[RMDB]
RNA sequence: GGGAACGACUCGAGUAGAGUCGAAAAGCCUGCUGACGGUAGGCGGCGUGCUGAAAGGCGAUGUGGAGCUUGUUGGCCUUCACGUCCACGUAAAUCUCGCUCCAGCCGCGCAGGCCGCGCGCCAGAAGAUCCAGCUACCAUUCGUGGUAGCUGGAUCAAAAGAAACAACAACAACAAC
Reactivity to DMS in 0.01 (KOAc 150mM, MgCl2 10mM, bicine 150mM(pH8.5), 24C), signal-to-noise 2, nucleotides 027 to 126: g000c020c000u010g020c010u000g010a070c020g030g030u010a090g010g010c100g030g040c020g030u000g000c060u000g040a080a120a120g030g020c160g000a120u000g030u010g010g020a000g000c070u010u000g010u010u010g010g000c110c030u000u000c100a060c070g010u000c000c000a110c120g010u010a070a130a090u000c070u020c090g010c020u000c000c000a260g000c050c000g000c170g000c000a060g010g050c030c030g040c070g000c130g060c000c020a070g000a110a130
Reactivity to 2A3 in 0.01 (KOAc 150mM, MgCl2 10mM, bicine 150mM(pH8.5), 24C), signal-to-noise 2, nucleotides 027 to 126: g000c000c010u000g010c070u090g030a080c040g010g040u070a080g050g030c060g020g000c070g050u060g000c060u090g070a160a120a110g070g000c060g030a010u060g040u040g050g000a010g020c020u170u100g170u120u140g130g010c000c000u020u110c050a050c040g020u000c000c050a060c010g020u040a030a090a210u060c080u000c020g010c000u000c010c030a010g010c010c020g000c010g000c000a010g040g000c000c000g070c000g010c020g000c000c010a070g060a140a000
Chemical mapping of a 177-nucleotide RNA with DMS and 2A3. The RNA was probed in 150 mM KOAc, 10 mM MgCl2 and 150 mM bicine (pH 8.5) at 24 C. Values cover nucleotides 27 to 126.